[RMDB]
RNA sequence: GGGAACGACUCGAGUAGAGUCGAAAAGCGUACUACUUACAGAGGUACAGCGAAACCACACUACCCACCUACUCCCAAAUAGGAGUAGAGGUGUGGUAGUAGCUGUACUACCCACCUGUAAGUAUCGCAAAGCAUCUGUUGUUCGCAACAGAUGCAACGCGUAUAUAGAGUUCGCUCUAUAUACGCGAAAAGAAACAACAACAACAAC
Reactivity to 2A3 in 0.01 (KOAc 150mM, MgCl2 10mM, bicine 150mM(pH8.5), 24C), signal-to-noise 3, nucleotides 027 to 156: g000c010g050u090a080c030u000a000c000u040u010a000c010a000g020a020g040g010u000a000c000a000g010c000g020a010a000a000c010c000a000c000a010c000u110a090c030c070c050a060c000c020u000a000c000u050c010c020c030a130a280a140u280a180g000g000a000g000u010a000g000a010g000g000u000g000u000g000g000u000a000g000u000a000g000c000u010g000u000a000c000u000a000c010c000c010a060c010c000u000g010u020a000a000g010u010a030u200c000g000c020a080a060a030g000c000a000u000c000u000g000u010u010g040u050u130c280g000c150a000a000c000a000g000a000u000g000c000a000a010
Reactivity to DMS in 0.01 (KOAc 150mM, MgCl2 10mM, bicine 150mM(pH8.5), 24C), signal-to-noise 2, nucleotides 027 to 156: g010c000g020u000a000c060u010a010c000u000u010a010c000a040g010a070g000g020u000a020c020a000g030c050g010a270a260a240c020c010a030c040a080c010u000a050c000c010c000a300c100c000u000a020c000u000c000c000c010a070a150a300u000a030g020g000a040g030u000a000g000a020g020g030u010g000u030g010g010u000a040g060u000a100g000c000u000g020u000a040c020u000a000c040c020c010a300c160c030u000g000u000a030a010g020u010a030u000c010g020c010a090a080a120g000c000a000u000c020u000g000u000u000g010u000u000c250g050c000a030a010c010a010g000a010u000g040c000a030a030